[RMDB]
RNA sequence: GGGAACGACUCGAGUAGAGUCGAAAAGGGAACGAACGAGUCAACAGCUGCCUCCCGGUGGCAGUGUGUGUAGGGUAAGCGGCAGCUUUCAUGUGAAGUGCCAAGGCCUUUUGGUUGGGGGGCUGAGGUACUAGGGAGUGUUCGCACUCCCUAGUACAAAAGAAACAACAACAACAAC
Reactivity to 2A3 in 0.01 (KOAc 150mM, MgCl2 10mM, bicine 150mM(pH8.5), 24C), signal-to-noise 2, nucleotides 027 to 126: g030g000g010a060a020c060g000a040a030c040g030a060g100u100c050a030a030c000a090g030c020u000g010c000c010u090c000c020c020g060g000u100g030g000c020a000g000u050g050u040g000u000g060u120a030g080g010g000u060a040a010g060c050g080g010c010a130g060c010u020u040u040c050a060u120g090u100g120a080a030g000u020g050c020c020a030a020g030g010c000c000u070u100u040u170g100g010u100u110g020g020g010g000g010g000c030u050g020a040g010
Reactivity to DMS in 0.01 (KOAc 150mM, MgCl2 10mM, bicine 150mM(pH8.5), 24C), signal-to-noise 3, nucleotides 027 to 126: g010g000g020a080a080c090g000a060a110c100g020a110g010u010c100a120a070c090a130g000c010u000g010c010c010u010c070c090c100g000g000u010g010g000c020a030g000u010g030u010g000u000g010u010a090g010g010g020u000a090a070g020c140g000g000c040a070g010c030u000u010u010c050a100u010g030u020g010a030a040g020u000g020c010c020a070a260g000g010c010c030u000u010u010u000g010g010u000u000g000g000g000g000g000g010c050u000g000a140g020